This 207-nucleotide RNA was probed chemically with 2A3 and DMS.
The data come from the RNA Mapping Database (RMDB), library M2RFPK.
RNA sequence: GGGAACGACUCGAGUAGAGUCGAAAAGCCGAUGAAAUGCCGAGAAGCCUGGCUCGAAAUCGUCGACGCAUCGACGACGGUCCUGCCAUGAGACCGUAACGAGGACAUGUCGCCUCGAAUGGCGUCGUAUAACAUGAGUGGUUCGCCACUCAUGUAAUAGACAGAAUUACUUCGGUAAUUCUGUCUAAAAAGAAACAACAACAACAAC
Reactivity to 2A3 in 0.01 (KOAc 150mM, MgCl2 10mM, bicine 150mM(pH8.5), 24C), signal-to-noise 3, nucleotides 027 to 156: g040c010c010g020a030u090g060a070a140a000u150g000c060c030g050a060g040a130a010g050c030c100u100g090g000c000u010c040g070a070a080a050u020c020g010u000c000g020a040c070g020c100a140u070c020g010a000c000g000a010c000g000g000u000c000c010u040g030c010c010a040u040g030a010g010a070c000c010g000u050a010a000c010g000a010g000g010a010c020a090u220g040u200c130g000c020c010u000c000g000a010a000u020g000g030c010g010u040c020g000u060a120u030a170a000c000a000u000g000a000g000u000g030g000u060u080c160g030c050c000a000c010u000c000a000u000g000u000a000a000
Reactivity to DMS in 0.01 (KOAc 150mM, MgCl2 10mM, bicine 150mM(pH8.5), 24C), signal-to-noise 2, nucleotides 027 to 156: g040c020c030g020a080u000g000a050a070a090u010g020c070c050g020a130g010a100a150g030c040c050u000g020g000c000u000c030g020a030a090a100u000c020g040u000c000g010a050c110g020c110a100u020c020g010a060c000g010a050c000g010g010u000c010c000u010g030c020c220a130u000g000a100g000a060c030c020g030u000a090a080c060g030a080g050g000a090c030a170u000g000u010c080g000c010c000u000c040g000a100a030u020g030g010c010g040u000c020g000u000a080u000a140a030c010a010u000g020a050g020u000g000g020u000u010c300g010c060c010a010c000u000c000a000u000g010u000a030a140

For 2A3, 2,347 sequencing reads were counted.